[RMDB]
RNA sequence: GGGAACGACUCGAGUAGAGUCGAAAAAUAGCGCUCGUCUGCGUUCUGUCAGGGCCUGUUUUGGUAAUGCCUUUCUUUCUGUUAUGCGCUACGCUGAUCGUCUGAGUAUAUGGCCUGGCCAUGCUGCCUACCACAAAAAGUUCGCUUUUUGUGGUAGAAAAGAAACAACAACAACAAC
Reactivity to DMS in 0.01 (KOAc 150mM, MgCl2 10mM, bicine 150mM(pH8.5), 24C), signal-to-noise 5, nucleotides 027 to 126: a070u010a060g010c090g010c020u000c090g000u010c060u010g010c030g010u000u000c070u000g010u010c050a090g000g000g000c030c030u000g000u000u000u000u000g010g010u010a100a080u010g010c030c030u000u010u000c020u000u000u000c060u010g010u000u000a060u010g020c060g010c040u000a050c130g020c050u000g010a110u000c050g010u000c040u010g010a090g000u000a090u000a070u000g010g010c010c060u000g020g000c020c040a050u000g020c070u000g000c160
Reactivity to 2A3 in 0.01 (KOAc 150mM, MgCl2 10mM, bicine 150mM(pH8.5), 24C), signal-to-noise 4, nucleotides 027 to 126: a000u070a010g030c030g010c030u020c050g120u020c070u070g020c010g030u080u040c020u040g110u050c040a050g050g000g040c000c010u050g060u050u110u070u090g060g020u090a070a050u120g040c010c000u040u080u020c050u030u090u000c020u050g120u100u080a080u140g040c040g010c030u020a020c050g010c030u020g020a080u050c020g040u010c040u030g030a010g070u080a070u020a040u180g000g000c000c070u030g030g000c020c000a020u070g010c010u020g000c010

This 177-nucleotide RNA was probed chemically with DMS and 2A3. For DMS, 9,477 sequencing reads were counted. The reactions ran in a buffer of 150 mM KOAc, 10 mM MgCl2 and 150 mM bicine (pH 8.5), at 24 C. For DMS the reverse transcriptase was MarathonRT.